[RMDB]
RNA sequence: GGGAACGACUCGAGUAGAGUCGAAAAGAGGAUGAUCAGUGGAUGUGCAUGUAUUUGCUUGCAAUCUACAGAGUUGGGAAAGCAACAAACAAAACAUACCAGACUAUGCUCAUAGAUCAGCUAAACAGUCAUGAUUCGCUUUCGAGCGAAUCAUGACAAAAGAAACAACAACAACAAC
Reactivity to DMS in 0.01 (KOAc 150mM, MgCl2 10mM, bicine 150mM(pH8.5), 24C), signal-to-noise 1, nucleotides 027 to 126: g020a000g000g090a020u000g040a030u000c080a000g070u010g000g000a120u050g040u010g040c190a200u000g030u010a060u030u000u050g040c220u020u000g000c000a000a280u000c000u060a060c020a130g040a100g000u010u000g000g000g000a070a050a050g000c000a050a000c200a000a030a000c140a000a130a140a060c000a000u000a170c090c000a040g000a050c000u110a040u010g000c010u000c060a190u000a060g000a010u000c010a030g010c060u020a090a040a090c210a170
Reactivity to 2A3 in 0.01 (KOAc 150mM, MgCl2 10mM, bicine 150mM(pH8.5), 24C), signal-to-noise 2, nucleotides 027 to 126: g170a000g000g050a070u020g050a060u080c000a010g090u020g140g010a030u010g040u120g130c040a000u070g010u160a140u030u030u200g070c020u030u030g050c030a010a030u000c020u010a210c040a020g160a030g100u110u120g000g010g030a060a120a000g060c000a010a010c020a050a060a000c050a000a050a010a000c000a000u030a190c020c020a010g070a040c050u020a070u300g000c020u000c000a110u080a060g120a210u120c000a020g020c040u120a140a180a000c030a060

Structure probing data (DMS and 2A3) for a 177-nucleotide construct. The RNA was probed in 150 mM KOAc, 10 mM MgCl2 and 150 mM bicine (pH 8.5) at 24 C. The 2A3 profile rests on 917 reads. For 2A3 the reverse transcriptase was SuperScript II with manganese.